Chemical mapping of a 177-nucleotide RNA with 2A3.
RNA sequence: GGGAACGACUCGAGUAGAGUCGAAAACGAGGGCUCCCCUAUAGUCUGCUUUGGCGGUGCGGCAGGCCCCGUGCGAUAGGCUAACUGCGGUAUUCCCCGCACUCCGUCGAGCGGUUAAUACGACGCUACACGCUACAGGCUUCGGCCUGUAGCGUGUAAAAGAAACAACAACAACAAC
Reactivity to 2A3 in 0.01 (KOAc 150mM, MgCl2 10mM, bicine 150mM(pH8.5), 24C), signal-to-noise 2, nucleotides 027 to 126: c060g040a170g000g070g000c060u060c000c000c000c020u090a090u120a230g070u040c000u000g010c060u140u120u110g030g000c000g010g000u110g040c030g060g000c050a030g030g000c060c000c000c000g000u070g000c010g070a120u020a120g150g000c110u100a100a000c120u060g000c000g020g000u010a100u030u080c040c020c000c000g000c000a040c000u080c020c000g130u030c020g030a020g000c000g000g040u120u120a030a030u040a170c000g000a030c000g000c000u000